An RNA of 177 nucleotides, treated with DMS and 2A3 and read out base by base.
[RMDB]
RNA sequence: GGGAACGACUCGAGUAGAGUCGAAAACAUCCAGUGUUCGCACUGGAUGAGAGGAAUGUGGAUCGGCAAACUACAUACCAAAAGCUGAGGUCGAAAGAGCAACGAUUUCGUCGUUCGCGACGAAAAAGCCCAACCAUUAAUUCGUUAAUGGUUGGGCAAAAGAAACAACAACAACAAC
Reactivity to DMS in 0.01 (KOAc 150mM, MgCl2 10mM, bicine 150mM(pH8.5), 24C), signal-to-noise 2, nucleotides 027 to 126: c000a020u000c000c010a010g010u000g010u000u010c230g030c000a000c000u000g000g000a000u000g010a060g010a090g000g000a080a050u000g020u000g000g000a040u000c020g000g000c070a060a110a060c060u000a040c050a060u000a080c050c040a040a050a100a100g030c040u000g010a060g000g000u000c000g030a080a050a040g000a030g020c040a040a010c090g000a250u010u010u000c000g010u000c000g000u010u010c180g000c000g020a010c020g000a000a000a040a060a130
Reactivity to 2A3 in 0.01 (KOAc 150mM, MgCl2 10mM, bicine 150mM(pH8.5), 24C), signal-to-noise 2, nucleotides 027 to 126: c010a010u000c000c000a010g000u000g030u020u060c210g030c080a010c010u000g000g000a000u020g010a020g000a010g010g060a100a030u060g010u060g030g030a050u100c050g060g000c070a040a080a050c020u070a040c030a060u100a080c030c010a020a090a030a000g020c070u060g040a010g050g040u060c060g080a080a050a060g050a030g000c020a020a070c030g050a070u010u020u030c010g010u010c010g000u000u080c230g000c020g070a000c000g020a020a010a000a010a000

For DMS the reverse transcriptase was MarathonRT. Reactivities are given for positions 27 through 126. The data come from the RNA Mapping Database (RMDB), library M2PK50. The RNA was probed in 150 mM KOAc, 10 mM MgCl2 and 150 mM bicine (pH 8.5) at 24 C. 2A3 adducts were read by reverse transcription with SuperScript II with manganese. For 2A3, 2,646 sequencing reads were counted.